[RMDB]
RNA sequence: GGGAACGACUCGAGUAGAGUCGAAAACCCGGAUCUGGAUGCCGAGCUGGGGAUUCGGGAUCGAGUGGAGUGAUACGGGGUUGGGCAACUAUCAUCGGAGGCAGCGUCAGGCCUGGGAGCUCGAUCGCAAAUGAAGGGUGUUCGCACCCUUCAUUUGAAAAGAAACAACAACAACAAC
Reactivity to DMS in 0.01 (KOAc 150mM, MgCl2 10mM, bicine 150mM(pH8.5), 24C), signal-to-noise 2, nucleotides 027 to 126: c010c000c010g020g000a030u010c020u020g000g000a070u000g000c060c020g000a080g000c070u000g030g020g000g000a250u000u000c040g010g020g020a050u000c040g000a080g010u000g020g000a120g010u010g000a090u000a080c140g000g000g020g020u000u010g010g010g010c080a060a100c080u000a050u010c070a040u010c110g010g010a120g020g020c060a070g000c080g000u000c080a070g000g020c040c010u010g000g000g010a090g000c030u000c050g010a060u000c110g010
The record gives the reactivity of an RNA of 177 nucleotides to DMS.